[RMDB]
RNA sequence: GGGAACGACUCGAGUAGAGUCGAAAAAAGUUGAUAUGGAUUUACUCCGAGGAGACGAACUACCACGAACAGGGGAAACUCUACCCGUGGCGUCUCCGUUUGACGAGUAAUUCCUAAGUCAACAAAACUAUAUAUAAAGGUUCGCCUUUAUAUAUAGAAAAGAAACAACAACAACAAC
Reactivity to DMS in 0.01 (KOAc 150mM, MgCl2 10mM, bicine 150mM(pH8.5), 24C), signal-to-noise 1, nucleotides 027 to 126: a090a100g010u000u000g000a030u000a070u020g000g010a050u000u000u000a000c020u000c010c010g000a040g020g040a020g020a020c010g000a070a040c090u010a300c030c010a010c000g030a060a200c260a100g000g020g000g000a000a000a010c000u000c000u000a120c300c300c000g010u000g000g010c010g000u000c010u020c000c010g010u000u010u010g010a160c300g000a030g000u000a020a010u000u000c000c000u020a000a070g000u000c010a000a040c000a110a090a050a090